[RMDB]
This 207-nucleotide RNA was probed chemically with 2A3. The 2A3 profile rests on 1,021 reads.
RNA sequence: GGGAACGACUCGAGUAGAGUCGAAAAAUAGGUUCGCCUAUCUAAGCUCCUAAGUCAACUCGAGUUACUAUAAUCAUGCAUUGUCAGUCGGAAACGACUUGGAUUUAUGCAUGGUAGUAACGAGAGUUGAUAUGGAUACGUAUCCGUUCGCGGAUAAAACGUCUUGCAGAUUCGUCUGCAAGACGUUAAAAGAAACAACAACAACAAC
Reactivity to 2A3 in 0.01 (KOAc 150mM, MgCl2 10mM, bicine 150mM(pH8.5), 24C), signal-to-noise 2, nucleotides 027 to 156: a000u050a010g050g080u060u050c250g110c050c010u010a040u020c120u090a110a030g030c050u060c000c000u060a180a000g020u000c000a000a000c000u000c000g030a040g020u000u000a010c000u000a000u220a300a170u180c010a010u000g020c000a000u000u010g000u040c000a000g010u020c000g040g060a110a070a060c020g000a010c000u070u070g130g020a030u220u300u120a010u040g000c000a000u000g010g000u000a000g000u000a010a010c000g000a000g000a000g020u000u000g000a000u000a000u010g030g000a080u100a150c050g050u080a040u000c010c000g000u050u110c300g000c000g080g030a040u140a010a140